[RMDB]
RNA sequence: GGGAACGACUCGAGUAGAGUCGAAAAGAUAUGGACGAUGUCACUGCAACAGCUAUAAGUGGUCGGAAACGACCACAUAGACAUGCAGUGACAUCGUCCUAAGUCAAAAGACGCCUUCGGGCGUCAAGACAUUUUUUAGCUUCGGCUAAAAAAUGUCAAAAGAAACAACAACAACAAC
Reactivity to DMS in 0.01 (KOAc 150mM, MgCl2 10mM, bicine 150mM(pH8.5), 24C), signal-to-noise 1, nucleotides 027 to 126: g000a000u020a300u000g000g040a040c030g040a050u030g010u000c000a050c010u000g000c020a060a050c300a140g010c000u000a020u000a050a120g010u000g000g020u010c000g000g000a110a070a130c010g020a000c000c000a000c020a010u000a000g000a050c080a250u000g010c000a020g020u000g000a000c000a000u000c000g020u000c000c000u010a010a090g010u000c090a100a090a100a160g000a010c000g010c000c010u000u000c140g040g010g000c010g000u000c010a030a100